[RMDB]
RNA sequence: GGGAACGACUCGAGUAGAGUCGAAAAAAUAUUACUGGGAAUGAGGUUCUCCCAGGAACGAGAUAGAAAUAGCUAAAUCUUUCGUUCAUAACCGCUUGAUUAUAAAGCUGAUGACUUCUGCAAAGCGCCUUAAAAUGUAGUUCGCUACAUUUUAAGGAAAAGAAACAACAACAACAAC
Reactivity to 2A3 in 0.01 (KOAc 150mM, MgCl2 10mM, bicine 150mM(pH8.5), 24C), signal-to-noise 7, nucleotides 027 to 126: a000a000u300a060u170u100a040c010u000g000g000g000a000a020u010g010a020g030g010u210u240c010u000c020c000c000a010g020g000a000a000c010g010a000g030a030u060a080g130a060a140a100u180a090g130c090u130a110a100a120u020c010u000u060u020c000g000u000u010c010a020u020a020a010c000c010g000c020u020u020g040a100u100u300a090u200a190a070a000g000c010u000g010a000u000g000a010c010u010u000c000u010g000c000a020a030a010g080c040g060
Reactivity to DMS in 0.01 (KOAc 150mM, MgCl2 10mM, bicine 150mM(pH8.5), 24C), signal-to-noise 5, nucleotides 027 to 126: a080a070u010a050u010u010a300c010u010g000g000g000a030a030u000g000a030g000g000u000u000c050u000c010c000c010a010g010g000a010a010c010g010a020g000a050u010a050g010a060a090a160u000a130g020c140u010a100a070a060u000c010u000u000u000c010g000u010u000c010a060u000a020a040c160c220g010c020u000u000g000a150u010u010a130u000a090a050a020g000c000u000g000a300u000g010a050c020u000u000c020u010g010c080a050a070a100g010c280g020
Chemical mapping of a 177-nucleotide RNA with 2A3 and DMS. For 2A3, 9,350 sequencing reads were counted. Reactivities are given for positions 27 through 126. It was measured as part of the RMDB library RFMREP. The RNA was probed in 150 mM KOAc, 10 mM MgCl2 and 150 mM bicine (pH 8.5) at 24 C.